[RMDB]
RNA sequence: GGGAACGACUCGAGUAGAGUCGAAAAAUUACUGCUUUGCCUAAAUGGCUGAUAUUCAUGGGGCCACCCCUAACCCAUAUGGUGCCUUUGCAACUUAACAAGAGGUACCCUUUCUCUUGAGCACAUGGGAGAAGAUUACAUUCGUGUAAUCUUCUCCAAAAGAAACAACAACAACAAC
Reactivity to 2A3 in 0.01 (KOAc 150mM, MgCl2 10mM, bicine 150mM(pH8.5), 24C), signal-to-noise 4, nucleotides 027 to 126: a000u110u100a050c050u040g050c020u060u070u090g010c020c020u080a130a150a110u160g010g040c000u020g060a040u050a110u180u190c080a070u060g000g030g010g070c040c030a060c020c010c000c010u040a040a050c010c010c000a020u040a100u130g030g000u010g010c020c000u020u030u080g040c070a140a140c110u120u110a120a040c100a030a030g010a000g080g000u040a050c020c010c000u020u150u030c030u000c000u030u070g030a010g050c010a010c030a150u140g090
Reactivity to DMS in 0.01 (KOAc 150mM, MgCl2 10mM, bicine 150mM(pH8.5), 24C), signal-to-noise 2, nucleotides 027 to 126: a080u010u010a090c090u000g010c030u000u010u000g020c030c010u000a090a090a090u000g010g030c000u000g000a100u010a060u010u000c120a060u010g000g010g010g000c010c040a170c040c010c010c020u010a080a100c030c010c010a060u010a050u020g010g020u000g020c010c040u000u000u000g010c150a080a090c220u010u010a090a120c090a050a030g010a030g000g010u000a040c050c010c160u000u010u000c000u010c020u000u010g000a090g000c100a050c170a090u000g000
An RNA of 177 nucleotides, treated with 2A3 and DMS and read out base by base. Reactivities are given for positions 27 through 126. For DMS the reverse transcriptase was MarathonRT. For DMS, 3,320 sequencing reads were counted. Values are in units of 0.01, from 0 to 300, in steps of 10.